Source: RMDB library M2RFPK, as collected in RNAgym.
An RNA of 207 nucleotides, treated with 2A3 and DMS and read out base by base.
For 2A3 the reverse transcriptase was SuperScript II with manganese.
The 2A3 profile rests on 3,793 reads.
The DMS profile rests on 2,600 reads.

RNA sequence: GGGAACGACUCGAGUAGAGUCGAAAAGCAUCGACGACGGUCCUGCCAUGAGACCGUAACGAGGACAUGUCGCCUCGAAUGGCGUCGGGGAGCCGGCAGCUUACCCCAGGGAUGAGCGCCUAAUGCCUAUACCCGAUUCGCUUCGGCGAAUCGGGAACAUUAAUCAUCGCUUCGGCGAUGAUUAAUGAAAAGAAACAACAACAACAAC
Reactivity to 2A3 in 0.01 (KOAc 150mM, MgCl2 10mM, bicine 150mM(pH8.5), 24C), signal-to-noise 5, nucleotides 027 to 156: g040c010a050u090c020g120a080c020g010a000c010g010g000u000c010c020u080g160c070c050a180u180g020a130g010a110c000c000g020u010a010a070c010g000a000g010g020a030c050a130u190g060u150c100g020c010c000u000c010g040a020a060u120g010g000c010g000u030c040g010g010g000g010a000g030c030c020g030g020c020a030g000c010u050u130a180c010c000c030c050a040g080g010g010a090u110g030a020g040c020g030c020c020u070a090a040u090g020c000c010u110a080u100a170c000c000c000g010a000u000u000c000g000c000u030u030c160g110g010c000g000a000a000u000c000g000g000g000a000a000
Reactivity to DMS in 0.01 (KOAc 150mM, MgCl2 10mM, bicine 150mM(pH8.5), 24C), signal-to-noise 1, nucleotides 027 to 156: g030c030a150u010c010g020a060c040g050a130c000g000g000u000c000c010u050g000c060c290a070u030g010a120g020a040c050c040g010u010a040a090c020g000a090g060g000a200c040a220u010g010u000c050g010c010c000u000c010g000a080a130u000g000g020c000g000u000c030g000g010g000g010a080g010c070c080g000g000c070a110g040c030u000u010a130c010c010c020c080a150g030g020g020a130u000g010a080g010c020g000c010c020u040a050a060u000g010c000c000u010a150u010a110c030c000c000g020a020u000u000c000g020c000u000u020c300g010g000c010g000a030a010u000c020g000g010g000a000a000